RNA sequence: GGGAACGACUCGAGUAGAGUCGAAAAGCGUAACGGCUGGGUGUAACCCAACUCUAGGUGUGCUGAUUAGCGGGGUUGACUCCGUAACAAAUAGGCACUGGUGGUAAAAAGCAUCCCACCUACUCACAAAGCUCCAAAUUCUUCGGAAUUUGGAGAAGUGACAUGGGAGGUUCGCCUCCCAUGUCACAAAAGAAACAACAACAACAAC
Reactivity to 2A3 in 0.01 (KOAc 150mM, MgCl2 10mM, bicine 150mM(pH8.5), 24C), signal-to-noise 1, nucleotides 027 to 156: g010c000g010u030a060a130c100g040g000c130u030g000g000g050u010g010u070a100a100c040c010c030a000a040c020u080c060u210a060g120g000u040g000u010g110c030u020g000a120u160u040a000g050c010g010g000g010g000u100u260g070a120c040u000c000c000g010u010a040a000c010a050a040a010u040a050g100g000c000a050c080u040g000g000u010g020g060u110a190a260a000a000a020g040c010a070u050c020c000c000a010c000c000u050a040c000u010c040a060c030a040a120a000g000c020u000c000c000a000a000a000u000u040c010u030u040c050g100g000a000a010u000u010u000g010g000a000g000a000a010